The data come from the RNA Mapping Database (RMDB), library OK2TST.
Chemical mapping of a 177-nucleotide RNA with 2A3 and DMS.
The DMS profile rests on 909 reads.
For 2A3, 1,249 sequencing reads were counted.
RNA sequence: GGGAACGACUCGAGUAGAGUCGAAAACUUACGUGGAGAAUAUAAAACCUACAUCUUAGUAUUCAUUUGAGGAUUAAAAUCAGAUGUCAAGCUGUUGAAGAUGAGGCCUGGCAUGGAGUAGACCCUACCUCACUACUGGAUUCGUCCAGUAGUGAGGAAAAGAAACAACAACAACAAC
Reactivity to 2A3 in 0.01 (KOAc 150mM, MgCl2 10mM, bicine 150mM(pH8.5), 24C), signal-to-noise 2, nucleotides 027 to 126: c010u030u090a090c030g010u040g020g120a110g070a290a030u150a030u030a210a070a010a020c000c000u060a080c030a030u040c020u050u020a030g020u070a230u040u100c030a050u020u000u110g020a010g050g030a080u240u280a160a150a000a090u040c010a000g000a020u010g030u020c060a070a040g010c000u040g040u290u160g040a080a000g010a040u030g010a020g000g050c010c010u010g040g020c010a040u000g000g020a030g010u080a010g040a020c010c000c000u050a100
Reactivity to DMS in 0.01 (KOAc 150mM, MgCl2 10mM, bicine 150mM(pH8.5), 24C), signal-to-noise 1, nucleotides 027 to 126: c020u000u000a050c110g050u000g020g000a100g010a110a090u010a080u010a060a050a140a170c020c020u000a100c030a010u000c000u000u000a060g000u000a120u010u000c020a050u000u000u000g010a030g000g010a160u020u020a050a050a040a190u000c030a020g000a030u000g000u000c150a050a060g010c000u000g020u000u000g010a040a030g000a030u000g010a100g010g020c080c030u010g010g020c040a020u000g000g010a060g000u010a060g010a080c040c010c010u000a170